[RMDB]
RNA sequence: GGGAACGACUCGAGUAGAGUCGAAAAGAUAUGGAUGAUUCAUCCUCGACAACAGCAGCUCUCGGAAACGAGAGCUGACAUGUCGUCGAUGAGAUCAUCCUAAGUCAAAACAGACCUUCGGGUCUGAUCUGUACGUUUAGUUCGCUAAACGUACAGAAAAAGAAACAACAACAACAAC
Reactivity to DMS in 0.01 (KOAc 150mM, MgCl2 10mM, bicine 150mM(pH8.5), 24C), signal-to-noise 4, nucleotides 027 to 126: g000a080u000a300u010g010g000a000u000g000a010u000u000c000a030u000c010c040u000c000g000a020c010a040a130c290a170g010c010a000g000c000u000c000u010c020g020g000a150a110a190c010g010a030g000a020g020c000u000g000a010c050a150u010g000u000c000g010u000c220g000a010u000g020a060g010a010u000c000a010u000c010c010u010a030a070g010u020c040a120a080a140a220c000a010g000a030c000c000u000u000c260g020g020g010u000c000u000g000a010
Reactivity to 2A3 in 0.01 (KOAc 150mM, MgCl2 10mM, bicine 150mM(pH8.5), 24C), signal-to-noise 2, nucleotides 027 to 126: g040a020u090a060u210g000g000a000u020g000a010u000u080c000a030u010c070c000u010c000g010a010c000a130a020c030a140g080c000a000g010c000u000c000u000c010g020g040a090a090a040c020g000a000g000a000g000c010u000g020a020c000a070u040g000u000c010g000u000c000g010a010u020g040a070g030a030u000c000a000u000c000c000u000a120a020g030u020c050a020a000a120a230c010a000g010a000c010c000u090u220c300g160g000g000u000c000u000g020a120